Annotation:
The record gives the reactivity of an RNA of 177 nucleotides to 2A3 and DMS. As a SHAPE reagent, 2A3 marks flexible, mostly unpaired nucleotides at the ribose 2'-OH. For 2A3, 1,491 sequencing reads were counted. For DMS, 1,104 sequencing reads were counted. Reactivities are given for positions 27 through 126.
RNA sequence: GGGAACGACUCGAGUAGAGUCGAAAACGUCCGAAAUGGGUCAGGUCGGGCAGGUAGUCGAAGAAGGAGAUGUGGAAACCGUCCACACCUUCGGCAUGCAAAGCGGCAAGCUGGUUGACGAUCCGCUCGUACUAUCGCUCUUCGGAGCGAUAGUACGAAAAGAAACAACAACAACAAC
Reactivity to 2A3 in 0.01 (KOAc 150mM, MgCl2 10mM, bicine 150mM(pH8.5), 24C), signal-to-noise 3, nucleotides 027 to 126: c060g090u020c000c000g020a030a030a170u120g010g000g010u070c040a020g030g180u000c050g000g000g000c000a010g010g050u160a020g000u050c040g030a040a020g030a010a020g110g050a140g030a170u060g000u000g010g000a100a080a070c120c060g220u020c000c000a000c000a010c000c000u010u000c010g000g010c020a060u220g000c010a000a150a000g030c020g000g000c030a050a220g030c030u110g020g260u050u010g000a010c000g000a040u000c000c000g020c030u010
Reactivity to DMS in 0.01 (KOAc 150mM, MgCl2 10mM, bicine 150mM(pH8.5), 24C), signal-to-noise 1, nucleotides 027 to 126: c160g000u090c060c020g020a050a060a140u020g000g000g000u000c060a160g080g120u000c000g030g000g000c010a120g000g030u050a050g010u000c060g060a150a000g000a090a050g000g000a020g020a020u000g020u000g000g000a140a150a080c270c270g000u000c000c000a000c050a000c030c010u020u020c000g000g010c080a000u030g000c220a100a060a000g000c050g000g000c010a140a030g010c040u010g000g010u000u000g010a300c080g000a190u000c000c000g000c050u000